Source information
Source: RMDB library M2RFPK, as collected in RNAgym. Structure probing data (2A3) for a 207-nucleotide construct. The reactions ran in a buffer of 150 mM KOAc, 10 mM MgCl2 and 150 mM bicine (pH 8.5), at 24 C. For 2A3, 1,068 sequencing reads were counted.

RNA sequence: GGGAACGACUCGAGUAGAGUCGAAAAAGACGGAAACCCAUCGACUGUCAACAGAUGCUGCAUCACCUGAUCACUGAUGGCUCAACGGUAUCCGGCGGUACAACUGAAUACUUGUAGCUGCCUUUUGAAAAGGAGUUCAUCUUCGGAUGAACUCCAAGAUGUAGCGGAACUUCGGUUCCGCUACAUCAAAAGAAACAACAACAACAAC
Reactivity to 2A3 in 0.01 (KOAc 150mM, MgCl2 10mM, bicine 150mM(pH8.5), 24C), signal-to-noise 2, nucleotides 027 to 156: a000g060a040c060g000g050a030a050a040c020c020c000a040u100c030g050a060c020u160g020u110c000a080a000c000a090g030a090u060g010c030u090g050c020a050u010c010a050c020c040u060g000a060u090c010a030c050u020g010a010u010g070g020c070u030c130a050a070c040g020g000u020a040u080c060c080g010g000c000g000g000u060a040c020a030a020c040u110g060a190a070u140a180c030u010u020g010u030a030g040c020u000g000c000c000u120u140u010u110g080a110a090a070a070g000g000a000g000u000u000c000a000u000c000u030u050c170g080g000a000u000g000a000a010c000u000c000c000a000a000